[RMDB]
RNA sequence: GGGAACGACUCGAGUAGAGUCGAAAAUUGAUUUUCAAUUUAUUACGCUGUACUUGGUUCCUAUUUUGGUUUCAAACAAGAUUUACUGACUUUUACUCACUAAGAUAACCUACAUCUCCAUGGUUAUUAUAUUCCAAACUUUCGAGUUUGGAAUAUAAAAAGAAACAACAACAACAAC
Reactivity to 2A3 in 0.01 (KOAc 150mM, MgCl2 10mM, bicine 150mM(pH8.5), 24C), signal-to-noise 7, nucleotides 027 to 126: u010u010g020a020u030u020u150u190c010a010a010u010u040u090a160u090u080a110c050g000c020u070g060u140a010c000u010u020g060g010u010u000c000c010u010a120u040u080u040u070g090g030u040u130u150c110a110a080a060c030a070a030g010a060u070u100u110a080c030u040g090a040c000u020u070u020u080a050c020u040c040a040c040u040a080a010g020a100u020a020a000c000c000u020a050c030a100u070c060u000c050c020a050u050g010g010u020u010a010u030
Reactivity to DMS in 0.01 (KOAc 150mM, MgCl2 10mM, bicine 150mM(pH8.5), 24C), signal-to-noise 3, nucleotides 027 to 126: u000u000g010a080u010u030u030u010c010a000a010u010u000u000a070u050u030a160c270g020c030u010g010u000a020c030u000u000g010g000u010u000c000c020u000a060u010u000u020u010g010g010u010u000u010c130a080a090a060c080a030a050g000a050u010u010u030a100c070u000g000a050c020u030u010u000u000a060c070u000c050a070c120u000a060a100g000a060u000a030a010c020c000u010a110c120a100u010c070u000c030c040a080u010g000g010u010u000a040u000
Conditions: 150 mM KOAc, 10 mM MgCl2 and 150 mM bicine (pH 8.5), 24 C. The record gives the reactivity of an RNA of 177 nucleotides to 2A3 and DMS. Values cover nucleotides 27 to 126.